An RNA of 207 nucleotides, treated with 2A3 and DMS and read out base by base. Values are in units of 0.01, from 0 to 300, in steps of 10. For DMS the reverse transcriptase was MarathonRT. For 2A3 the reverse transcriptase was SuperScript II with manganese. It was measured as part of the RMDB library M2RFPK. Values cover nucleotides 27 to 156. For 2A3, 3,637 sequencing reads were counted.
RNA sequence: GGGAACGACUCGAGUAGAGUCGAAAAAUACAAGGGAAGGUUUCGGCCAAAUGUUGUAUGCAGAAAGCGUGAGGAAGGUAGCACUUAGACACUCACGAGUAGCGGUUCGGCAGUAGUGCUAAAAUGAGACAGUACGAAAAGUUCGCUUUUCGUACAACAAUAGAAAGUGCUUCGGCACUUUCUAUUGAAAAGAAACAACAACAACAAC
Reactivity to 2A3 in 0.01 (KOAc 150mM, MgCl2 10mM, bicine 150mM(pH8.5), 24C), signal-to-noise 4, nucleotides 027 to 156: a000u150a010c040a020a060g040g010g030a000a060g040g000u020u050u140c070g040g000c040c040a050a070a060u120g020u070u020g020u040a070u070g030c030a010g080a090a060a000g040c030g010u020g010a010g030g040a090a040g040g000u060a020g020c020a010c080u040u070a020g030a050c020a010c070u020c000a020c020g020a030g020u060a040g050c060g000g060u050u040c050g030g000c010a020g020u090a010g020u010g000c020u030a030a030a070a070u120g010a040g010a030c070a080g010u000a000c000g010a000a010a010a000g030u040u090c180g060c090u010u010u000u000c000g000u000a000c000a000a000
Reactivity to DMS in 0.01 (KOAc 150mM, MgCl2 10mM, bicine 150mM(pH8.5), 24C), signal-to-noise 3, nucleotides 027 to 156: a050u000a040c050a050a060g010g020g000a080a100g030g020u000u000u000c070g050g020c060c010a040a070a100u000g010u000u010g010u000a060u000g010c020a090g010a060a060a100g020c040g070u010g010a070g000g000a080a090g000g010u000a060g010c030a070c030u000u000a090g010a090c030a060c030u010c000a070c020g000a110g020u000a050g000c030g000g010u000u010c040g040g020c030a080g010u000a060g020u000g000c030u000a030a020a070a070u020g010a170g000a080c050a100g000u000a000c010g000a010a020a020a010g030u010u000c300g000c000u000u000u000u000c010g030u000a000c000a030a070